Structure probing data (DMS and 2A3) for a 177-nucleotide construct. For DMS, 15,237 sequencing reads were counted. High DMS reactivity at an A or C suggests that its Watson-Crick edge is free. 2A3 adducts were read by reverse transcription with SuperScript II with manganese.
RNA sequence: GGGAACGACUCGAGUAGAGUCGAAAAAUCGGAGAAGGAUGAAAAGCCUGAUAACACGGAUGUCGAAUUUCAAACCAUUGCAAUUGAACCGCUUGGCGAUUGCAUCGUUGGCCGUGAAAGGUUCAAAGUCCUAAAAUAAUUUCGAUUAUUUUAGGACAAAAGAAACAACAACAACAAC
Reactivity to DMS in 0.01 (KOAc 150mM, MgCl2 10mM, bicine 150mM(pH8.5), 24C), signal-to-noise 9, nucleotides 027 to 126: a060u010c050g010g010a120g010a150a060g000g000a070u010g000a080a100a150a160g010c010c010u010g010a110u010a110a180c050a020c020g010g010a080u000g010u010c060g010a070a100u000u010u000c090a070a090a130c080c130a050u000u000g010c020a040a050u000u000g000a090a100c040c030g010c220u010u000g010g020c020g010a020u000u000g010c030a140u000c150g010u000u010g010g010c000c010g010u000g000a070a100a060g010g010u010u000c050a060a070a150
Reactivity to 2A3 in 0.01 (KOAc 150mM, MgCl2 10mM, bicine 150mM(pH8.5), 24C), signal-to-noise 5, nucleotides 027 to 126: a000u040c020g020g010a100g040a100a030g080g010a030u080g090a030a070a040a080g030c000c010u030g020a080u090a180a040c030a000c030g010g020a020u100g080u160c040g030a090a100u040u150u160c080a080a060a040c030c030a050u030u100g010c010a030a050u000u040g040a150a120c020c020g110c230u110u190g020g000c010g020a020u010u020g000c030a000u020c010g030u030u070g050g000c000c000g000u000g010a130a060a000g010g000u010u040c010a000a000a020